[RMDB]
RNA sequence: GGGAACGACUCGAGUAGAGUCGAAAAACACCAAAACUGAAAACGGAAGGCAAUCCUUCCACGACGAUACUUACUUUCCUUUGAUCGUCAUUACUACUGGCAUAGCCACAAAGGAGAACAAACAUGAGCGCGGACACUGACUUCGGUCAGUGUCCAAGUCGAUUUGAAUGUUCGCAUUCAAAUCGACAAAAGAAACAACAACAACAAC
Reactivity to DMS in 0.01 (KOAc 150mM, MgCl2 10mM, bicine 150mM(pH8.5), 24C), signal-to-noise 1, nucleotides 027 to 156: a060c090a110c020c040a030a030a200a220c070u000g010a110a040a040a070c130g040g010a070a000g020g060c190a100a030u000c010c000u000u010c000c010a060c030g010a070c010g020a140u000a050c010u000u000a040c130u000u010u030c010c000u000u000u010g000a020u000c050g020u020c050a110u000u000a150c120u000a070c080u080g000g030c080a200u020a140g030c010c060a080c050a010a010a030g030g000a120g010a100a050c100a050a070a150c100a070u010g010a120g020c060g070c080g020g020a080c000a030c000u010g010a000c000u000u000c300g130g010u000c000a010g040u010g000u000c000c000a000a000
Reactivity to 2A3 in 0.01 (KOAc 150mM, MgCl2 10mM, bicine 150mM(pH8.5), 24C), signal-to-noise 6, nucleotides 027 to 156: a000c050a090c020c050a080a080a050a070c130u210g080a050a050a030a040c100g010g000a010a000g020g010c180a060a220u300c010c000u010u010c010c010a010c020g020a000c010g010a010u060a160c030u060u030a030c000u050u150u070c000c010u050u010u030g010a030u030c010g020u000c020a000u060u160a050c070u020a040c010u020g010g020c050a210u100a130g030c000c010a030c050a010a050a010g030g010a020g040a070a050c050a090a110a020c070a090u220g070a060g110c100g000c080g040g010a010c000a000c000u000g000a000c000u040u030c110g030g000u010c000a000g000u000g000u000c000c000a000a000